RNA sequence: GGGAACGACUCGAGUAGAGUCGAAAAAAAAAGAUAUGGAUCAGCCGUAGGACGACGAUCUGGACGUAACAUCGAUCGGAAACGAUCGUGGUCCAGGGAGUCCGAGGGCUGAUCCUAAGUCAAAAAACCAACUAAGAUUCUUCGGAAUCUUAGUUGGAAAAGAAACAACAACAACAAC
Reactivity to DMS in 0.01 (KOAc 150mM, MgCl2 10mM, bicine 150mM(pH8.5), 24C), signal-to-noise 1, nucleotides 027 to 126: a010a050a060a050a050g010a050u000a300u010g000g000a000u000c000a000g020c010c010g000u000a300g060g000a000c010g000a090c300g000a010u000c000u000g020g000a000c010g050u000a020a060c110a050u010c000g010a010u000c010g030g010a080a060a100c000g010a010u000c010g030u000g040g000u000c000c000a010g000g000g020a010g020u000c010c000g010a200g010g000g030c000u000g000a000u000c000c000u000a000a070g000u020c000a010a020a030a070a100a170